[RMDB]
RNA sequence: GGGAACGACUCGAGUAGAGUCGAAAACUCAGUGAUCAAAUCAAGAUUAUCGCAGAUUUAGCCCAUUAAAGCCAGGUUAAGUGAAAUCUAUUUAUGUAAGAGGUGAUAGGUUAUUUAUCUCCACAUGGGGAUAGUUUUUCAAACCCAACAUUGCCCCAAUAUCCGGCUAAUUCGUUAGCCGGAUAUUAAAAGAAACAACAACAACAAC
Reactivity to 2A3 in 0.01 (KOAc 150mM, MgCl2 10mM, bicine 150mM(pH8.5), 24C), signal-to-noise 2, nucleotides 027 to 156: c020u030c030a000g130u060g130a080u070c090a030a130a050u070c060a130a100g020a070u090u060a110u240c050g000c020a010g070a150u060u090u060a010g000c000c020c020a010u150u140a200a090a010g030c070c050a030g000g050u010u080a070a000g030u070g110a000a010a030u010c020u030a090u060u180u010a060u090g030u030a070a050g070a050g080g030u020g020a040u020a020g000g070u060u050a030u070u060u040a030u070c020u000c000c030a140c130a300u230g000g000g000g000a010u020a020g000u020u120u030u010u050c020a020a070a020c020c110c010a040a000c000a040u060u110g080c020c030c060c000
Reactivity to DMS in 0.01 (KOAc 150mM, MgCl2 10mM, bicine 150mM(pH8.5), 24C), signal-to-noise 2, nucleotides 027 to 156: c030u010c030a100g080u010g010a100u000c030a070a080a220u010c040a070a190g000a140u000u000a050u000c040g000c050a300g000a080u010u020u000a090g010c010c030c080a200u000u000a090a070a230g000c040c030a030g020g030u000u000a040a110g040u030g020a060a050a040u000c060u000a060u000u010u010a070u030g010u010a090a080g020a090g010g020u000g010a090u020a050g000g000u000u000a090u000u010u000a050u010c010u000c000c010a110c140a140u000g060g010g030g020a030u000a000g000u020u000u020u000u010c080a060a110a080c030c010c030a030a110c120a130u010u000g020c050c000c030c110